An RNA of 177 nucleotides, treated with 2A3 and DMS and read out base by base. Reactivities are given for positions 27 through 126. The RNA was probed in 150 mM KOAc, 10 mM MgCl2 and 150 mM bicine (pH 8.5) at 24 C. Source: RMDB library M2PK90, as collected in RNAgym. 2A3 adducts were read by reverse transcription with SuperScript II with manganese.
RNA sequence: GGGAACGACUCGAGUAGAGUCGAAAAAAUAUGCUCGACAGGCUGCCUGUCGGACAGAGCUUUUAGAUCUUCUGAUCUUUCCCUGCAGCAUAUCGCUUAUGCAUCAAGCGAUUGUCGGAUCACACAACUCGGAUAUGAUAUUCGUAUCAUAUCCGAGAAAAGAAACAACAACAACAAC
Reactivity to 2A3 in 0.01 (KOAc 150mM, MgCl2 10mM, bicine 150mM(pH8.5), 24C), signal-to-noise 5, nucleotides 027 to 126: a000a000u170a020u020g000c000u020c020g010a000c010a010g030g090c170u170g220c020c010u010g010u000c000g010g000a010c000a000g060a020g040c010u030u040u010u020a020g000a010u000c030u300u060c140u300g010a010u000c000u000u010u000c000c000c010u050g090c050a060g000c000a020u040a010u240c010g010c000u030u060a060u230g140c060a130u140c120a040a000g000c000g010a020u010u020g070u100c040g050g040a090u130c030a030c010a010c000a140a170
Reactivity to DMS in 0.01 (KOAc 150mM, MgCl2 10mM, bicine 150mM(pH8.5), 24C), signal-to-noise 6, nucleotides 027 to 126: a090a080u010a060u000g010c000u000c010g000a010c000a010g010g010c220u010g030c040c010u000g010u000c010g000g000a020c010a000g000a110g010c260u000u000u000u000a020g000a010u000c010u000u010c300u000g000a010u000c000u000u000u000c000c000c010u010g020c150a150g010c030a030u010a010u000c010g020c010u000u010a080u010g020c190a090u010c110a050a010g000c010g010a020u000u000g020u000c060g010g020a130u010c100a080c140a090c180a070a120